[RMDB]
The record gives the reactivity of an RNA of 177 nucleotides to 2A3 and DMS.
RNA sequence: GGGAACGACUCGAGUAGAGUCGAAAAAUGUGAUGGCUACUUCAAAGCUGGUUAUGUCCAUAAGAGUGAGGCUCCAACCCUCCCAAAGAAAACCAAUAUGGUGCCGGUGCCUGAAAGUCUGCGUGUGGUGAUUAUAUCUGUUCGCAGAUAUAAUCACAAAAGAAACAACAACAACAAC
Reactivity to 2A3 in 0.01 (KOAc 150mM, MgCl2 10mM, bicine 150mM(pH8.5), 24C), signal-to-noise 3, nucleotides 027 to 126: a000u110g030u050g020a080u070g020g020c020u040a030c050u110u070c040a080a090a010g030c030u030g030g010u120u100a100u190g100u000c020c010a020u040a150a040g090a000g070u080g050a080g010g060c000u030c080c040a060a080c020c020c000u030c020c020c020a050a110a020g110a020a060a010a000c030c020a010a050u110a050u160g000g000u010g040c020c020g010g010u030g020c000c010u040g040a070a020a010g030u040c040u050g030c020g040u140g050u050g170
Reactivity to DMS in 0.01 (KOAc 150mM, MgCl2 10mM, bicine 150mM(pH8.5), 24C), signal-to-noise 7, nucleotides 027 to 126: a060u010g030u010g010a070u000g000g010c020u000a070c080u000u000c120a060a100a130g010c070u000g020g010u000u000a070u010g020u010c020c030a060u000a060a100g010a090g010u010g000a100g010g000c020u010c040c060a050a150c100c010c020u000c010c010c020a060a090a120g000a060a050a080a090c100c050a050a110u000a060u000g000g020u000g010c070c040g010g020u000g010c030c040u000g000a060a050a090g000u000c040u000g000c090g020u000g020u000g010

The RNA was probed in 150 mM KOAc, 10 mM MgCl2 and 150 mM bicine (pH 8.5) at 24 C. For 2A3, 3,128 sequencing reads were counted. It was measured as part of the RMDB library OK2TST.